Background: Conditions: 150 mM KOAc, 10 mM MgCl2 and 150 mM bicine (pH 8.5), 24 C. An RNA of 207 nucleotides, treated with 2A3 and DMS and read out base by base. For 2A3, 2,004 sequencing reads were counted. DMS adducts were read by reverse transcription with MarathonRT.

RNA sequence: GGGAACGACUCGAGUAGAGUCGAAAAAAUGGAUGGUAUAAAUGAUUGACAGUGUUGCUGUGUUAGGGCCGGUUAUGGUGACUGUGGAAGUUGCUCAUGUUUGAUUGCUCUUUUAAGUGUGUGUGACUCUGCACAUGUGUGCUUGAUGUGUGUGCAACAAAAUCGGGGUAUUCGUACCCCGAUUUUGAAAAGAAACAACAACAACAAC
Reactivity to 2A3 in 0.01 (KOAc 150mM, MgCl2 10mM, bicine 150mM(pH8.5), 24C), signal-to-noise 3, nucleotides 027 to 156: a010a020u140g010g030a050u070g020g040u110a050u100a160a130a040u160g040a080u080u160g040a070c050a030g040u020g020u110u030g020c050u020g030u050g050u130u100a070g030g010g020c060c010g030g030u110u100a060u100g030g000u020g040a050c030u020g000u040g060g040a060a040g030u080u050g000c010u010c060a030u070g060u020u030u060g080a100u030u080g030c000u040c000u060u070u050u060a090a090g030u050g010u020g000u020g010u000g060a050c020u020c040u090g010c030a020c010a050u040g040u010g000u010g070c080u050u020g050a090u030g030u010g000u010g010u040g020c040a060a040
Reactivity to DMS in 0.01 (KOAc 150mM, MgCl2 10mM, bicine 150mM(pH8.5), 24C), signal-to-noise 1, nucleotides 027 to 156: a030a100u010g030g010a090u000g030g020u000a080u000a070a090a140u000g010a070u010u000g000a110c050a080g000u010g000u000u000g040c040u030g020u010g010u000u000a100g000g010g040c030c010g040g000u000u000a060u010g010g110u000g010a050c040u000g000u020g030g010a090a160g000u010u010g010c000u010c070a140u000g030u020u000u090g000a080u000u000g000c040u010c030u010u000u000u010a050a090g050u000g000u000g020u030g030u000g000a040c060u000c060u000g020c050a070c000a070u000g030u020g040u000g000c020u000u000g010a050u000g000u010g000u010g080u000g000c030a070a180